Description:
The record gives the reactivity of an RNA of 177 nucleotides to DMS and 2A3. DMS adducts were read by reverse transcription with MarathonRT. The reactions ran in a buffer of 150 mM KOAc, 10 mM MgCl2 and 150 mM bicine (pH 8.5), at 24 C. For 2A3, 1,256 sequencing reads were counted.
RNA sequence: GGGAACGACUCGAGUAGAGUCGAAAAAAUGUCUCGAAAUCAUUGACAUGGCUUCUUCCAUAGUUAGAAGAUCGUCGUCAAAGUUAGCAACGUGAUUCAUCAACAUUUGCUGUUUUGAGGCAGCAAAACAGCCUGACCUCUUCGGAGGUCAGGCUGUAAAAGAAACAACAACAACAAC
Reactivity to DMS in 0.01 (KOAc 150mM, MgCl2 10mM, bicine 150mM(pH8.5), 24C), signal-to-noise 2, nucleotides 027 to 126: a070a040u000g000u000c010u000c040g010a000a010a020u000c090a100u000u000g020a010c000a090u000g000g000c030u000u000c010u000u020c100c180a140u000a120g000u010u010a070g000a020a000g000a050u000c070g060u000c150g030u000c010a000a090a120g010u010u000a020g020c020a010a020c300g050u000g010a060u000u010c290a080u030c250a100a030c050a040u000u010u000g010c020u000g010u000u000u020u000g000a040g010g000c000a050g040c230a040a020a020
Reactivity to 2A3 in 0.01 (KOAc 150mM, MgCl2 10mM, bicine 150mM(pH8.5), 24C), signal-to-noise 2, nucleotides 027 to 126: a000a000u030g000u000c000u000c010g030a050a030a050u090c020a060u090u020g010a000c010a040u130g020g000c020u000u020c000u050u000c030c010a200u080a160g140u160u150a030g150a030a010g020a100u130c160g000u010c050g020u030c000a040a020a000g070u160u210a010g080c000a010a000c080g000u010g010a090u130u090c020a080u050c040a130a060c020a030u060u070u030g000c010u030g010u000u010u040u030g050a060g050g020c000a000g040c000a010a100a020